This 177-nucleotide RNA was probed chemically with DMS and 2A3.
[RMDB]
RNA sequence: GGGAACGACUCGAGUAGAGUCGAAAAUAAAAGGACGAUGAGAAAUAUAGAGAGAUAUCGGUACUCCCACGCGCGUCUCUCAUUGAUAAGAGUGAUAAAAGGGUGAUUAUGUUAUAGCGCGCAAAAACCUUAAUUUGGUGUUCGCACCAAAUUAAGGAAAAGAAACAACAACAACAAC
Reactivity to DMS in 0.01 (KOAc 150mM, MgCl2 10mM, bicine 150mM(pH8.5), 24C), signal-to-noise 2, nucleotides 027 to 126: u010a090a130a070a100g000g020a080c010g000a090u030g000a150g010a090a080a060u010a100u020a100g010a050g000a030g010a060u000a050u010c040g040g030u000a120c060u000c010c000c000a090c110g050c020g000c190g020u000c010u010c000u000c000a090u000u040g050a120u000a070a040g000a080g010u000g030a090u000a030a050a090a090g000g020g010u010g000a070u010u000a070u000g000u000u000a060u000a060g020c020g020c020g020c030a030a010a060a090a050
Reactivity to 2A3 in 0.01 (KOAc 150mM, MgCl2 10mM, bicine 150mM(pH8.5), 24C), signal-to-noise 1, nucleotides 027 to 126: u050a020a090a000a010g030g000a020c030g070a040u050g040a070g110a050a150a040u200a020u190a120g070a030g010a000g020a030u030a000u060c010g000g000u030a050c020u060c040c030c000a000c060g010c010g030c000g040u000c000u020c000u000c000a010u040u110g020a000u040a160a070g020a000g030u060g040a060u150a150a160a010a010g090g000g000u060g030a060u020u190a020u080g090u030u020a030u070a100g020c060g000c000g070c000a000a140a000a000a000
The data come from the RNA Mapping Database (RMDB), library M2PK90. For DMS the reverse transcriptase was MarathonRT. The reactions ran in a buffer of 150 mM KOAc, 10 mM MgCl2 and 150 mM bicine (pH 8.5), at 24 C. For DMS, 929 sequencing reads were counted. High 2A3 reactivity points to a flexible backbone, as in loops and unpaired stretches.